[RMDB]
RNA sequence: GGGAACGACUCGAGUAGAGUCGAAAACAUGACCUUUAUGCCACUCGCUACCUCCUGGGUUGUCUGCCUGCCGGUUGCCAUUGCCUUCUGCUGGAGGUAACCGCUCGUGGCUAUGAGCACGCCGGCCGGACCCGUACCAGUUCGCUGGUACGGGUCCAAAAGAAACAACAACAACAAC
Reactivity to 2A3 in 0.01 (KOAc 150mM, MgCl2 10mM, bicine 150mM(pH8.5), 24C), signal-to-noise 2, nucleotides 027 to 126: c050a030u170g150a160c000c050u130u080u050a230u150g030c060c000a000c040u030c020g020c020u050a150c000c000u040c000c000u020g050g000g080u030u000g010u000c010u070g040c010c000u010g000c000c020g000g000u000u000g020c000c000a050u050u000g000c000c000u090u160c050u210g100c060u140g010g000a090g100g020u080a040a040c030c040g020c010u030c120g100u030g030g030c020u060a030u000g000a020g000c000a000c080g000c000c000g000g010c000c060
Chemical mapping of a 177-nucleotide RNA with 2A3. Values cover nucleotides 27 to 126.